[RMDB]
RNA sequence: GGGAACGACUCGAGUAGAGUCGAAAAUAGAUGGUGCCCACGUCACUCUCCCUAGGAUCUUUACCCUUUCCUAGAAAUUGUCGUGGGCAUUAAAAAAAACCAAAACUGUCGUUCGCGACAGUUUUGGGCUAUGAGGUACGUUCGCGUACCUCAUAGCAAAAGAAACAACAACAACAAC
Reactivity to DMS in 0.01 (KOAc 150mM, MgCl2 10mM, bicine 150mM(pH8.5), 24C), signal-to-noise 2, nucleotides 027 to 126: u010a150g030a150u010g010g020u000g000c000c000c000a010c010g000u000c020a020c200u000c060u010c210c050c000u010a010g000g010a020u000c070u000u000u010a120c260c220c140u010u000u010c010c000u010a010g010a040a040a100u000u000g000u000c000g000u000g020g020g000c000a000u000u000a000a000a000a040a040a030a050a180c000c000a010a000a000a000c000u000g000u010c000g010u000u000c170g030c020g000a000c010a010g020u000u000u000u000g020g020
Reactivity to 2A3 in 0.01 (KOAc 150mM, MgCl2 10mM, bicine 150mM(pH8.5), 24C), signal-to-noise 2, nucleotides 027 to 126: u140a030g160a130u170g000g010u010g000c000c000c000a000c000g010u000c010a020c030u100c030u110c070c020c000u000a000g000g010a010u020c040u120u260u240a160c020c000c000u020u010u030c000c000u000a010g010a030a060a010u080u030g010u010c000g000u000g000g000g000c000a000u010u000a000a000a000a000a010a010a000a020c000c010a000a000a000a010c010u000g000u000c000g000u050u090c300g000c000g090a000c000a000g000u000u000u010u000g000g000